Structure probing data (DMS and 2A3) for a 177-nucleotide construct.
The reactions ran in a buffer of 150 mM KOAc, 10 mM MgCl2 and 150 mM bicine (pH 8.5), at 24 C.
[RMDB]
RNA sequence: GGGAACGACUCGAGUAGAGUCGAAAAGAAAAUAAUAGCUUAUUUUGACCUAUUCCCAACAAAUGUAGGAAAAUCGGCCGAAUAGACAGCUAUAAACAUUUAAAUAUGAGAUACUGAGGCCAUGGAAGUAUCCUUCUAAAUUCGUUUAGAAGGAUACAAAAGAAACAACAACAACAAC
Reactivity to DMS in 0.01 (KOAc 150mM, MgCl2 10mM, bicine 150mM(pH8.5), 24C), signal-to-noise 4, nucleotides 027 to 126: g000a060a020a060a050u010a060a050u000a090g010c110u000u000a070u000u000u000u000g010a130c050c020u000a220u010u000c000c000c000a130a280c190a060a110a050u000g010u000a040g020g010a120a040a080a080u000c220g010g020c010c010g000a090a100u020a100g010a150c110a020g000c050u000a030u010a070a060a140c010a020u000u000u000a090a070a080u000a000u010g000a180g000a100u000a050c090u000g010a140g010g020c010c020a050u010g010g010a120a100
Reactivity to 2A3 in 0.01 (KOAc 150mM, MgCl2 10mM, bicine 150mM(pH8.5), 24C), signal-to-noise 2, nucleotides 027 to 126: g000a000a040a010a000u090a010a030u060a040g020c020u020u000a030u070u070u040u070g020a020c010c010u020a060u020u040c000c030c000a010a040c040a040a140a030u260g010u140a080g060g000a070a070a040a100u130c050g000g000c000c010g030a020a000u050a040g140a030c040a000g040c030u020a020u100a100a160a030c030a050u080u090u180a100a190a170u190a090u080g010a060g030a070u050a080c010u030g020a010g030g000c040c040a020u100g070g040a110a020

Reactivities are given for positions 27 through 126. The DMS profile rests on 3,188 reads.